The record gives the reactivity of an RNA of 177 nucleotides to DMS and 2A3.
For DMS, 2,258 sequencing reads were counted.
DMS adducts were read by reverse transcription with MarathonRT.
[RMDB]
RNA sequence: GGGAACGACUCGAGUAGAGUCGAAAAGAGGAGGAAAACGAAAAUAUUCAGCGGCGCUUACUGGGAUAUUUGGUUUGAAUCCAUACUUGGCGAUAGUGAAGAGUAUAAUUACAUAGAACUUCUCAGCUGAAAGUAUUAUCUUCGGAUAAUACUUUCAAAAAGAAACAACAACAACAAC
Reactivity to DMS in 0.01 (KOAc 150mM, MgCl2 10mM, bicine 150mM(pH8.5), 24C), signal-to-noise 3, nucleotides 027 to 126: g010a120g000g000a050g010g010a200a040a040a030c040g000a170a020a070a030u000a030u000u000c020a060g010c070g050g000c140g010c150u000u000a070c050u020g010g030g010a020u000a020u000u000u010g010g010u000u000u000g010a300a130u000c010c020a060u000a050c040u000u000g010g010c030g010a110u010a060g020u000g000a050a150g000a040g010u000a060u010a100a090u000u000a080c090a070u000a060g000a110a110c080u000u000c020u000c030a120g030c210
Reactivity to 2A3 in 0.01 (KOAc 150mM, MgCl2 10mM, bicine 150mM(pH8.5), 24C), signal-to-noise 1, nucleotides 027 to 126: g100a010g000g000a010g000g000a050a000a000a000c000g100a090a000a000a030u000a040u030u020c000a010g000c060g300g000c140g000c120u050u260a100c030u100g050g070g070a020u020a050u080u030u030g100g000u000u060u080g030a010a030u000c010c000a010u040a070c000u040u040g120g000c010g050a050u060a050g100u060g120a080a020g000a010g110u050a040u050a190a110u170u060a010c040a050u190a040g030a030a020c000u040u020c000u020c050a040g020c010